[RMDB]
RNA sequence: GGGAACGACUCGAGUAGAGUCGAAAAGCUAGGCAUUUCGAUGCCUAGCGAGCGCAGAGUCUAUGCAUCUCUGAAUCACACAACAGCCGUGUCUAUGCCUGGGAGUAUCCCUCUUCGGAGGGAUAAAUCCAUCGAUAGUAUUCGUACUAUCGAUGGAAAAAGAAACAACAACAACAAC
Reactivity to 2A3 in 0.01 (KOAc 150mM, MgCl2 10mM, bicine 150mM(pH8.5), 24C), signal-to-noise 6, nucleotides 027 to 126: g000c000u000a010g000g010c000a000u050u060u150c240g110a010u010g000c000c000u000a000g000c000g000a020g000c090g000c010a020g010a010g060u020c050u120a170u190g040c040a100u050c030u000c010u040g060a090a070u100c030a030c010a010c010a120a070c010a050g040c030c020g050u040g030u030c030u050a070u090g040c010c010u040g030g030g000a060g030u030a010u000c010c010c010u010c010u010u030c170g090g000a000g000g000g000a000u000a000a000a000
Reactivity to DMS in 0.01 (KOAc 150mM, MgCl2 10mM, bicine 150mM(pH8.5), 24C), signal-to-noise 7, nucleotides 027 to 126: g010c000u000a000g000g010c000a010u000u000u020c170g010a030u000g000c000c000u000a000g000c000g000a050g010c140g010c040a030g010a080g020u000c060u000a100u010g000c100a090u000c020u000c020u000g010a100a090u000c090a080c100a070c070a060a080c090a090g000c030c040g010u000g010u000c050u000a060u000g000c030c030u000g000g000g010a110g010u000a030u000c000c000c000u000c000u000u010c150g030g000a010g000g000g000a000u000a000a070a120
The record gives the reactivity of an RNA of 177 nucleotides to 2A3 and DMS. The 2A3 profile rests on 12,540 reads. For DMS, 12,600 sequencing reads were counted. DMS adducts were read by reverse transcription with MarathonRT. It was measured as part of the RMDB library M2PK50. The RNA was probed in 150 mM KOAc, 10 mM MgCl2 and 150 mM bicine (pH 8.5) at 24 C.